[RMDB]
RNA sequence: GGGAACGACUCGAGUAGAGUCGAAAAAUCGAAUUCGUUCGAUACGAUUCCUAAGUCUGCCUUGAGCCUGCAUCGUACAAUGAUGUUGUCGGAAACGACAAUUGAGUACGAGCAGGCAAUGAUGGGCAGAUAUGGAUAGUGCUUAGUUCGCUAAGAAAAUGAUCAUCUGUUUCGACAGAUGAUCAUUAAAAGAAACAACAACAACAAC
Reactivity to DMS in 0.01 (KOAc 150mM, MgCl2 10mM, bicine 150mM(pH8.5), 24C), signal-to-noise 2, nucleotides 027 to 156: a060u000c010g000a030a060u000u010c240g040u000u000c030g010a080u000a120c100g000a270u000u000c010c020u010a070a300g000u000c000u010g010c000c000u000u000g010a070g010c020c000u000g000c000a100u010c000g020u010a000c000a130a080u010g010a050u000g000u000u010g020u010c010g030g030a140a100a230c020g020a020c010a000a020u000u000g010a030g010u000a020c010g010a160g000c010a010g020g010c010a020a010u010g040a140u000g000g000g040c020a010g020a010u010a110u000g020g000a040u000a080g010u010g000c030u000u000a080g010u000u000c100g000c020u020a120a170g020a190a060
Reactivity to 2A3 in 0.01 (KOAc 150mM, MgCl2 10mM, bicine 150mM(pH8.5), 24C), signal-to-noise 4, nucleotides 027 to 156: a000u050c020g000a040a040u180u050c140g060u100u040c010g040a020u040a150c020g060a130u190u050c010c000u010a120a030g020u000c000u000g000c000c000u000u020g030a000g010c020c000u020g010c010a300u030c000g000u000a000c010a170a300u180g060a040u120g060u010u000g000u000c010g000g070a130a120a090c010g000a000c000a010a000u030u070g030a030g000u000a000c000g010a000g020c010a000g000g000c000a000a000u000g010a000u010g010g000g000c000a000g000a000u010a020u020g000g010a010u020a050g070u060g050c020u070u040a020g020u140u090c150g010c130u070a050a050g070a110a190